The record gives the reactivity of an RNA of 207 nucleotides to 2A3.
[RMDB]
RNA sequence: GGGAACGACUCGAGUAGAGUCGAAAAACAACAGAUAGCUGGAACCAGCGUAGAAUUCUACGCAUAUCCAUAGCGAAUGGUACCUGUAAAGAAAAUAAUGAGUCAUGUACAAGUACCAACAGGACUCAAUGCCAUGGUGAUGUCAAUCACAUAUGCAUGAUAUCCCCGCUUUCGAGCGGGGAUAUCAAAAAGAAACAACAACAACAAC
Reactivity to 2A3 in 0.01 (KOAc 150mM, MgCl2 10mM, bicine 150mM(pH8.5), 24C), signal-to-noise 1, nucleotides 027 to 156: a000c060a040a000c020a040g150a180u170a040g020c020u000g070g000a120a130c290c240a050g030c000g000u020a000g030a110a250u300u140c010u000a000c020g000c000a000u040a030u060c000c000a000u070a030g030c000g030a020a030u030g000g000u030a030c020c020u000g000u160a000a000a030g030a030a110a000a070u130a030a080u060g000a010g030u000c030a030u000g010u010a020c000a060a130g000u010a030c060c000a000a050c000a050g180g000a000c030u000c020a030a090u070g000c040c070a070u050g070g000u000g010a030u030g100u290c130a060a030u000c020a010c030a030u090a010u070g020c060a070
Conditions: 150 mM KOAc, 10 mM MgCl2 and 150 mM bicine (pH 8.5), 24 C. Values cover nucleotides 27 to 156. Source: RMDB library OK3TST, as collected in RNAgym. The 2A3 profile rests on 522 reads.